[RMDB]
RNA sequence: GGGAACGACUCGAGUAGAGUCGAAAAAUUGAUAAACGGCACCUAUAAGGUGGUGCCGAACCAGCGAGACCUACCAACACGCAACGAGCAGUCUGGUAUGACUGCAAACCUAUGGUAAACAAGAUAACUGCAAUAAGAUAUUCGUAUCUUAUUGCAGAAAAGAAACAACAACAACAAC
Reactivity to 2A3 in 0.01 (KOAc 150mM, MgCl2 10mM, bicine 150mM(pH8.5), 24C), signal-to-noise 5, nucleotides 027 to 126: a000u080u100g020a030u140a090a130a020c010g000g000c010a010c000c020u100a090u020a300a120g240g040u070g000g000u000g000c000c010g000a010a010c000c010a000g020c000g060a080g020a060c000c010u030a050c020c000a040a030c070a020c100g020c010a060a060c050g030a030g010c000a000g010u000c020u070g050g110u260a100u160g000a010c010u000g000c000a000a000a000c040c000u100a100u100g030g000u090a100a100a030c030a100a050g040a110u120a090a060
Reactivity to DMS in 0.01 (KOAc 150mM, MgCl2 10mM, bicine 150mM(pH8.5), 24C), signal-to-noise 6, nucleotides 027 to 126: a110u010u000g010a110u010a050a110a160c030g010g010c010a010c000c000u010a170u010a110a150g010g030u000g010g010u000g020c000c010g010a040a030c090c080a090g000c060g010a090g010a080c040c040u010a070c030c010a090a120c080a070c060g010c050a100a080c180g000a130g000c000a020g000u000c000u010g020g010u010a050u010g000a010c010u000g000c010a030a040a060c070c020u010a050u000g010g020u010a030a070a110c150a080a070g000a090u000a090a140

Source information:
The record gives the reactivity of an RNA of 177 nucleotides to 2A3 and DMS. Reactivities are given for positions 27 through 126. For 2A3 the reverse transcriptase was SuperScript II with manganese.